About this RNA:
Structure probing data (DMS) for a 177-nucleotide construct. The DMS profile rests on 1,331 reads. It was measured as part of the RMDB library TTRINS. DMS adducts were read by reverse transcription with MarathonRT. The RNA was probed in 150 mM KOAc, 10 mM MgCl2 and 150 mM bicine (pH 8.5) at 24 C. Reactivities are given for positions 27 through 126.

RNA sequence: GGGAACGACUCGAGUAGAGUCGAAAAGAUAUGGAUCCUGGUAGUUGGGAAGGCGUUGAAACGAACGGAAGCUCGGAAACGAGCUUCCGUUCGUGGAGCCUUCCAACAACGAACAGGAUCCUAAGUCGACAUUUCUAAAGUUCGCUUUAGAAAUGUCAAAAGAAACAACAACAACAAC
Reactivity to DMS in 0.01 (KOAc 150mM, MgCl2 10mM, bicine 150mM(pH8.5), 24C), signal-to-noise 1, nucleotides 027 to 126: g000a080u010a300u010g000g000a000u010c000c000u000g010g000u010a210g030u000u010g030g000g000a030a000g000g030c020g010u000u010g020a160a180a040c010g020a000a030c000g010g030a050a010g010c000u010c010g040g010a080a130a280c020g000a040g020c020u000u010c010c000g010u000u000c000g000u010g000g000a110g010c010c000u000u000c000c000a040a060c020a000a010c010g000a170a300c000a010g000g000a000u000c000c010u010a030a070g000u000c110